[RMDB]
RNA sequence: GGGAACGACUCGAGUAGAGUCGAAAAGAUAUGGACCAUGUGGAACUACGCUAUUCUGGUCGGAAACGACCAUUAGAGCGCCACCGCUGGUCCUAAGUCAAAGAUAAGCCAGUUCGCUGGCUUAUCACUACUGCUGUCAGUUCGCUGACAGCAGUAGAAAAGAAACAACAACAACAAC
Reactivity to 2A3 in 0.01 (KOAc 150mM, MgCl2 10mM, bicine 150mM(pH8.5), 24C), signal-to-noise 2, nucleotides 027 to 126: g030a010u080a010u170g000g010a010c010c000a060u280g000u000g000g130a160a110c280u300a070c300g000c000u010a040u060u000c010u000g020g000u000c000g000g030a110a090a030c010g010a000c000c000a000u030u010a010g040a000g020c030g030c010c000a000c000c010g000c000u010g020g000u070c000c000u000a020a020g000u020c040a090a110a000g000a010u000a000a000g020c000c000a000g000u040u080c260g060c170u000g000g000c000u000u000a000u010c010a000
Reactivity to DMS in 0.01 (KOAc 150mM, MgCl2 10mM, bicine 150mM(pH8.5), 24C), signal-to-noise 2, nucleotides 027 to 126: g030a020u000a300u010g000g000a010c010c000a020u040g000u010g030g010a160a070c140u010a300c030g010c000u000a040u000u000c070u010g000g000u000c020g000g010a110a170a250c020g000a000c000c010a030u010u000a030g000a020g000c000g010c010c230a080c000c020g000c020u000g010g010u000c000c000u000a000a080g000u000c050a070a150a110g010a000u000a000a000g020c000c000a000g020u010u010c270g030c010u000g000g010c000u000u010a000u010c010a290